Structure probing data (DMS and 2A3) for a 177-nucleotide construct. Source: RMDB library OK2TRN, as collected in RNAgym.
RNA sequence: GGGAACGACUCGAGUAGAGUCGAAAACGCGGUCGGGCUGUCGCUGCUGUCGUUCGUCUGGCGCGCGUGGCACCCGUACGACGCGGUGCUCGGCCGCGUCGAGGGCAUGCACGGCUAUCACGACGUACGGUGCAAAAUUAUUCGUAAUUUUGCACCGAAAAGAAACAACAACAACAAC
Reactivity to DMS in 0.01 (KOAc 150mM, MgCl2 10mM, bicine 150mM(pH8.5), 24C), signal-to-noise 5, nucleotides 027 to 126: c060g020c040g010g010u000c050g010g010g010c050u010g010u010c120g020c050u000g010c050u000g020u000c020g010u010u000c040g010u020c100u010g020g000c070g020c030g020c140g030u000g010g000c050a140c020c010c010g000u000a040c020g000a020c010g000c010g000g010u000g020c090u010c100g000g000c010c000g020c010g010u000c010g010a050g000g000g010c080a070u000g020c040a070c040g010g010c030u020a100u000c060a080c080g000a080c070g000u000a110
Reactivity to 2A3 in 0.01 (KOAc 150mM, MgCl2 10mM, bicine 150mM(pH8.5), 24C), signal-to-noise 4, nucleotides 027 to 126: c060g010c030g030g010u060c040g040g050g020c060u100g070u190c090g030c070u100g010c040u110g060u100c030g040u050u070c010g050u040c110u060g040g010c020g000c020g000c040g040u070g060g000c010a030c000c000c000g000u060a070c030g020a010c010g000c020g000g010u040g010c100u050c040g080g000c000c000g000c000g010u000c000g000a030g000g000g010c040a020u120g030c030a020c010g040g000c000u080a070u200c050a040c110g070a000c030g050u170a040